Structure probing data (DMS and 2A3) for a 177-nucleotide construct.
Source: RMDB library OK2TST, as collected in RNAgym.
The 2A3 profile rests on 1,906 reads.
For 2A3 the reverse transcriptase was SuperScript II with manganese.
Conditions: 150 mM KOAc, 10 mM MgCl2 and 150 mM bicine (pH 8.5), 24 C.
RNA sequence: GGGAACGACUCGAGUAGAGUCGAAAAAAGAACCUGCAUUCUCAAGCGCACUCGAUGCCUUCCAAAAAGCAGGUAAUACUGUCAUUGGCAAUGACGUUUGGAUCGGCUCUGAGGCAAUGGUCAUGCCAUAGCCGAGAUGAUUCGUCAUCUCGGCUAUAAAAGAAACAACAACAACAAC
Reactivity to DMS in 0.01 (KOAc 150mM, MgCl2 10mM, bicine 150mM(pH8.5), 24C), signal-to-noise 3, nucleotides 027 to 126: a080a060g000a140a040c010c020u000g000c060a220u000u000c030u000c060a090a090g010c170g030c040a090c040u010c130g000a100u020g000c000c020u010u000c020c020a030a010a070a130a120g000c020a000g000g000u010a060a060u010a100c110u010g000u000c060a070u000u000g010g010c110a100a080u000g000a020c010g000u000u010u000g020g010a070u000c160g010g010c020u000c090u020g020a080g000g000c050a070a060u000g000g010u000c080a080u000g000c020c010
Reactivity to 2A3 in 0.01 (KOAc 150mM, MgCl2 10mM, bicine 150mM(pH8.5), 24C), signal-to-noise 2, nucleotides 027 to 126: a000a000g040a000a020c000c000u000g000c010a070u100u050c050u010c050a070a040g090c030g020c090a080c070u080c060g060a090u060g030c000c000u050u100c060c030a050a000a000a020a020g000c010a000g050g010u000a010a030u110a030c060u070g040u090c010a030u110u030g120g000c010a060a070u030g000a020c010g030u000u040u000g120g010a070u000c050g030g050c000u020c060u100g050a050g040g000c000a010a070u040g010g000u070c000a030u130g010c000c000
DMS adducts were read by reverse transcription with MarathonRT. Values cover nucleotides 27 to 126.